Chemical mapping of a 207-nucleotide RNA with DMS and 2A3.
The reactions ran in a buffer of 150 mM KOAc, 10 mM MgCl2 and 150 mM bicine (pH 8.5), at 24 C.
[RMDB]
RNA sequence: GGGAACGACUCGAGUAGAGUCGAAAAGAGUACUACCCGACUAAAAAUACUUGGGCAAUAUUUAGGGAUGAAGUAUCUAACUAAAAGAACGGCCACUUCGAAAUUUGUCCUGACAUUUUUCAGGUGUGCAUUUUAGGUUUAAAAUAUCAAGUAUUAACCAUAAAUGACCAUUCGUGGUCAUUUAUGGAAAAGAAACAACAACAACAAC
Reactivity to DMS in 0.01 (KOAc 150mM, MgCl2 10mM, bicine 150mM(pH8.5), 24C), signal-to-noise 1, nucleotides 027 to 156: g010a170g020u000a060c030u020a110c000c000c000g080a100c010u010a030a070a150a090a100u000a030c000u000u000g010g010g000c040a100a060u000a020u000u010u000a110g020g000g000a100u010g010a080a090g020u000a060u000c040u000a080a180c020u000a020a060a110a020g000a040a140c110g020g000c000c000a010c020u020u010c030g020a000a040a050u000u000u000g020u000c110c150u020g030a080c020a020u000u000u000u000u000c020a050g020g000u000g000u020g030c020a230u000u000u000u000a040g010g010u000u000u000a110a050a070a070u010a050u000c020a060a190g020u000a050u010u010a060a240
Reactivity to 2A3 in 0.01 (KOAc 150mM, MgCl2 10mM, bicine 150mM(pH8.5), 24C), signal-to-noise 3, nucleotides 027 to 156: g040a020g040u060a050c020u040a050c000c000c000g040a030c100u150a140a160a040a050a030u020a040c010u020u010g010g020g030c030a050a060u030a080u110u100u070a120g000g000g040a060u050g060a120a090g050u120a030u050c030u030a020a060c000u010a020a080a010a070g070a110a030c050g060g000c020c000a000c020u060u060c060g010a010a000a020u000u020u030g020u050c010c070u080g100a030c010a020u020u010u010u000u010c000a000g040g000u000g080u140g030c020a020u000u030u050u140a010g000g000u070u110u170a050a090a050a050u160a030u090c030a030a010g040u060a020u130u090a050a030

Values cover nucleotides 27 to 156.